Structure probing data (DMS and 2A3) for a 177-nucleotide construct. For 2A3 the reverse transcriptase was SuperScript II with manganese. It was measured as part of the RMDB library TTRDES. The 2A3 profile rests on 1,964 reads. The reactions ran in a buffer of 150 mM KOAc, 10 mM MgCl2 and 150 mM bicine (pH 8.5), at 24 C.

[RMDB]
RNA sequence: GGGAACGACUCGAGUAGAGUCGAAAAGAUAUGGAAGAUACAGCUUUUGACGUUCCUACAUCGGAAACGAUGUAUGAACGAUAAGCUGUCUUCCUAAGUCAAAAGAAGCUCGCUUCGGCGAGCUUCACAGAGUGUCAACGUUCGCGUUGACACUCUGAAAAGAAACAACAACAACAAC
Reactivity to DMS in 0.01 (KOAc 150mM, MgCl2 10mM, bicine 150mM(pH8.5), 24C), signal-to-noise 1, nucleotides 027 to 126: g010a030u000a180u010g000g000a020a000g000a140u020a090c090a000g020c000u000u000u000u010g000a170c130g060u000u030c000c050u010a000c010a000u000c000g000g020a040a010a080c010g010a000u010g000u000a020u000g000a020a020c000g030a080u020a000a000g020c020u000g010u010c010u010u010c000c000u010a020a100g010u000c010a080a060a140a150g000a000a010g000c000u000c000g030c000u000u000c190g020g000c000g000a000g000c000u010u000c040a050
Reactivity to 2A3 in 0.01 (KOAc 150mM, MgCl2 10mM, bicine 150mM(pH8.5), 24C), signal-to-noise 1, nucleotides 027 to 126: g000a010u030a000u020g010g000a000a000g010a040u240a250c040a010g000c030u190u160u300u300g300a300c180g020u020u000c000c000u000a010c000a010u000c010g000g000a040a020a000c020g000a000u000g000u000a010u000g000a000a000c010g090a100u090a100a000g000c020u000g020u040c010u040u000c000c000u000a020a000g000u000c030a030a000a000a300g030a000a010g020c000u000c000g010c010u000u090c280g110g000c050g000a010g010c000u000u000c000a000
For DMS, 1,375 sequencing reads were counted.